[RMDB]
Chemical mapping of a 177-nucleotide RNA with DMS and 2A3. DMS adducts were read by reverse transcription with MarathonRT. Values are in units of 0.01, from 0 to 300, in steps of 10. The data come from the RNA Mapping Database (RMDB), library M2PK50. Reactivities are given for positions 27 through 126.
RNA sequence: GGGAACGACUCGAGUAGAGUCGAAAAGGGAAAAAGUUCGCUUUUUCCCAAAUAAAAUCAGCGGUUAAAAAGCUCCGCUUAUUACCGCUGAAGCGGAGCUUAAAAGUGAGGUGUUCGCACCUCACAACUACAUGCAUUGGUUCGCCAAUGCAUGUAGAAAAGAAACAACAACAACAAC
Reactivity to DMS in 0.01 (KOAc 150mM, MgCl2 10mM, bicine 150mM(pH8.5), 24C), signal-to-noise 1, nucleotides 027 to 126: g000g000g000a020a010a010a010a000g000u000u010c140g030c000u000u010u000u010u010c000c000c000a020a050a020u000a050a050a080a080u000c020a050g020c020g000g000u000u030a050a130a060a050a020g000c000u000c010c020g000c000u000u000a000u000u000a070c060c030g010c040u010g010a010a030g000c010g010g000a020g000c020u000u010a010a040a100a090g010u020g010a010g020g020u010g020u010u000c180g000c000a040c010c020u000c000a000c010a050a120
Reactivity to 2A3 in 0.01 (KOAc 150mM, MgCl2 10mM, bicine 150mM(pH8.5), 24C), signal-to-noise 1, nucleotides 027 to 126: g010g010g000a010a020a000a020a000g040u070u120c160g110c070u030u000u010u010u030c000c010c010a000a010a000u010a000a060a000a030u080c020a010g000c000g020g130u090u130a110a120a130a000a000g010c000u010c010c000g000c000u000u060a040u000u100a040c000c020g010c050u030g020a000a000g010c000g000g000a010g040c010u040u060a050a080a000a020g010u000g000a000g000g000u010g020u030u090c190g000c070a000c000c030u020c000a000c000a000a010